[RMDB]
RNA sequence: GGGAACGACUCGAGUAGAGUCGAAAAGCGCGUGAGGGCGGUGACGAUUAUUUCUUGUAAAACAAAAUGAGGUCGUUGGCGAAGUCAAAAUGCUCACCGUGGUUUUUUUGAGGUACGCUCUGUGCGGCGAGGCUAAAUGUUUCGACAUUUAGCCUCGAAAAGAAACAACAACAACAAC
Reactivity to DMS in 0.01 (KOAc 150mM, MgCl2 10mM, bicine 150mM(pH8.5), 24C), signal-to-noise 1, nucleotides 027 to 126: g000c010g000c020g000u000g010a030g030g020g000c030g040g000u010g020a030c010g000a080u000u000a060u020u000u000c050u000u000g000u000a060a070a090a300c100a040a030a060a050u010g010a070g000g000u010c040g000u010u000g030g040c020g010a120a100g020u020c060a000a000a080a060u010g010c010u000c030a060c210c190g000u000g000g000u000u000u000u010u000u000u010g000a020g000g050u000a070c050g020c000u010c040u000g000u020g010c030g010g010

Description:
Structure probing data (DMS) for a 177-nucleotide construct. The reactions ran in a buffer of 150 mM KOAc, 10 mM MgCl2 and 150 mM bicine (pH 8.5), at 24 C. The DMS profile rests on 970 reads. Source: RMDB library OK2TRN, as collected in RNAgym.